[RMDB]
RNA sequence: GGGAACGACUCGAGUAGAGUCGAAAAUUAAUACGCAACAUCAACCAACAACAUCAAAUAUUAUUAUUUUAUUAUACUCUUUAGGACUCGAACGUUAGUAAGAUUUUACUAAACGCUUUAAGUCCUAUACUUCUUUACUAUUCGUAGUAAAGAAGUAAAAAGAAACAACAACAACAAC
Reactivity to 2A3 in 0.01 (KOAc 150mM, MgCl2 10mM, bicine 150mM(pH8.5), 24C), signal-to-noise 2, nucleotides 027 to 126: u040u020a030a080u130a050c070g080c070a030a070c010a070u180c020a030a170c040c000a040a040c000a000a000c000a050u130c030a040a150a020u110a040u030u110a010u110u070a070u040u150u060u000a070u050u210a140u300a300c020u250c070u140u060u100a010g010g000a000c000u000c050g000a020a000c000g000u000u000a000g020u010a020a090g080a300u180u300u030u000a010c000u030a050a160a020c010g010c010u000u030u010a000a030g000u000c000c000u000a000